[RMDB]
RNA sequence: GGGAACGACUCGAGUAGAGUCGAAAAUAUUACAGCUUGUAAUUUAGGGGGCGCUGUUUGUAGGAAGCAUGCUACAGAGUACAGAGAGUAUAUGGAAGCAUAUAAUCUUGUCUCUGCAUCAGGUUUCGCAGUAUCUCGUUCGCGAGAUACAAAAGAAACAACAACAACAAC
Reactivity to 2A3 in 0.01 (KOAc 150mM, MgCl2 10mM, bicine 150mM(pH8.5), 24C), signal-to-noise 5, nucleotides 027 to 129: u200a020u060u150a030c030a040g140c110u130u120g050u100a020a070u110u160u300a100g000g030g040g000g000c040g000c010u020g030u060u050u130g050u010a030g000g080a050a000g040c040a030u050g010c010u030a050c020a010g000a000g000u120a010c020a020g190a000g010a020g100u020a010u000a010u010g070g000a120a000g110c010a000u010a000u000a030a050u000c010u000u030g010u000c010u000c000u000g010c000a050u030c020a030g060g030u010u000u000c040g010c040a000
Reactivity to DMS in 0.01 (KOAc 150mM, MgCl2 10mM, bicine 150mM(pH8.5), 24C), signal-to-noise 4, nucleotides 027 to 129: u040a070u030u030a040c030a170g020c120u000u000g020u030a020a100u010u000u000a070g000g010g000g010g010c030g000c050u000g000u000u000u000g000u030a090g000g030a060a070g000c070a050u000g010c000u000a160c040a040g020a030g030u090a060c000a080g050a030g030a060g020u020a030u000a000u040g010g020a150a110g000c020a020u020a030u030a070a050u000c020u000u000g020u030c000u000c020u050g010c100a020u040c060a060g030g000u060u010u020c050g000c160a120